The record gives the reactivity of an RNA of 177 nucleotides to DMS. The data come from the RNA Mapping Database (RMDB), library OK2TST. The reactions ran in a buffer of 150 mM KOAc, 10 mM MgCl2 and 150 mM bicine (pH 8.5), at 24 C. For DMS the reverse transcriptase was MarathonRT.

[RMDB]
RNA sequence: GGGAACGACUCGAGUAGAGUCGAAAAAUGCCUAUGAAUUGGUUGCUCCUAUUUUAGAAAAAAUAGCUGCAAAGGCAGAAGAUGGACAACCAUGUGUUACAUAUAUUGGUCCAAAUGGUGCUGGUCAAUUUAAAUGCGACUUCGGUCGCAUUUAAAUAAAAGAAACAACAACAACAAC
Reactivity to DMS in 0.01 (KOAc 150mM, MgCl2 10mM, bicine 150mM(pH8.5), 24C), signal-to-noise 1, nucleotides 027 to 126: a090u000g000c020c010u010a180u010g020a130a110u010u000g020g010u010u000g010c050u000c130c000u000a030u000u000u000u010a180g010a010a040a020a030a020a060u010a060g020c120u000g010c020a080a110a080g030g000c030a030g000a140a160g010a140u000g000g010a050c010a060a060c060c050a010u000g000u010g010u000u000a110c080a060u010a070u020a030u030u000g010g000u000c040c000a020a040a080u000g000g020u010g010c080u000g010g000u000c080a070